[RMDB]
RNA sequence: GGGAACGACUCGAGUAGAGUCGAAAACCCACGAGGACGCCAGGACAAGGUUCAACUCGACGGUGGUGAAUCCGCCGCAUGUGCGCUUCUACUGCGGAGCUCCCCUCGUGGCAUCCAACGGCCACCGACAUACCCUACACUUCGGUGUAGGGUAUGUAAAAGAAACAACAACAACAAC
Reactivity to DMS in 0.01 (KOAc 150mM, MgCl2 10mM, bicine 150mM(pH8.5), 24C), signal-to-noise 3, nucleotides 027 to 126: c040c000c020a190c120g010a040g000g000a070c190g000c040c040a050g000g010a100c210a100a070g020g010u010u000c070a100a120c040u000c070g030a150c010g000g020u000g000g000u000g010a110a110u000c040c030g000c000c000g010c070a030u000g030u000g000c130g000c070u000u010c020u010a090c040u000g000c060g000g010a100g020c030u000c030c020c000c040u000c080g010u010g010g030c020a050u010c060c140a050a130c150g000g000c010c010a010c050c100g020
Reactivity to 2A3 in 0.01 (KOAc 150mM, MgCl2 10mM, bicine 150mM(pH8.5), 24C), signal-to-noise 3, nucleotides 027 to 126: c000c000c000a000c010g030a040g060g000a040c060g040c020c030a040g070g000a070c050a060a080g010g000u070u020c060a070a010c030u020c070g100a100c010g060g050u050g000g040u110g200a090a080u040c030c040g030c000c000g020c040a050u180g020u060g070c070g000c010u040u010c030u090a120c050u100g240c060g000g060a040g040c010u080c060c010c000c000u000c030g000u030g020g000c020a050u070c050c030a070a030c060g040g000c000c000a020c030c000g010
An RNA of 177 nucleotides, treated with DMS and 2A3 and read out base by base. It was measured as part of the RMDB library OK2TST. The reactions ran in a buffer of 150 mM KOAc, 10 mM MgCl2 and 150 mM bicine (pH 8.5), at 24 C.